Chemical mapping of a 177-nucleotide RNA with DMS and 2A3. 2A3 adducts were read by reverse transcription with SuperScript II with manganese.
RNA sequence: GGGAACGACUCGAGUAGAGUCGAAAAGGUUGGCAACCGGGUGUCGAGUGCAUGGGCAUAAGCCCGCCUAACUGUGAGACCAACAAGUCGAGCAGAUGCGAAAGCAGGCCCAAGUGAUCCGGCGGUACGGAAAAAUUACUUUCGAGUAAUUUUUCCGAAAAGAAACAACAACAACAAC
Reactivity to DMS in 0.01 (KOAc 150mM, MgCl2 10mM, bicine 150mM(pH8.5), 24C), signal-to-noise 4, nucleotides 027 to 126: g010g000u010u000g010g020c100a080a040c010c030g020g000g000u020g000u010c050g040a100g020u020g020c050a120u000g010g000g010c050a040u020a040a070g000c010c150c000g010c030c070u010a110a170c000u000g010u000g010a300g010a020c010c040a050a200c300a100a110g000u000c000g000a300g000c020a030g010a070u010g010c020g000a080a060a120g020c020a090g020g000c010c010c010a020a120g010u010g000a040u010c030c000g000g000c300g000g000u030a130
Reactivity to 2A3 in 0.01 (KOAc 150mM, MgCl2 10mM, bicine 150mM(pH8.5), 24C), signal-to-noise 5, nucleotides 027 to 126: g050g000u030u010g050g000c020a050a040c030c040g000g030g040u100g040u100c110g030a060g060u140g040c030a050u080g020g000g000c020a030u050a250a030g010c000c000c010g000c010c010u060a130a080c000u010g020u040g040a030g020a020c040c000a060a120c050a120a020g000u020c010g000a000g000c000a010g020a070u070g020c020g030a090a030a000g010c020a020g050g030c000c000c000a020a020g050u070g030a040u030c010c000g000g010c020g040g030u070a020
Record summary: DMS adducts were read by reverse transcription with MarathonRT.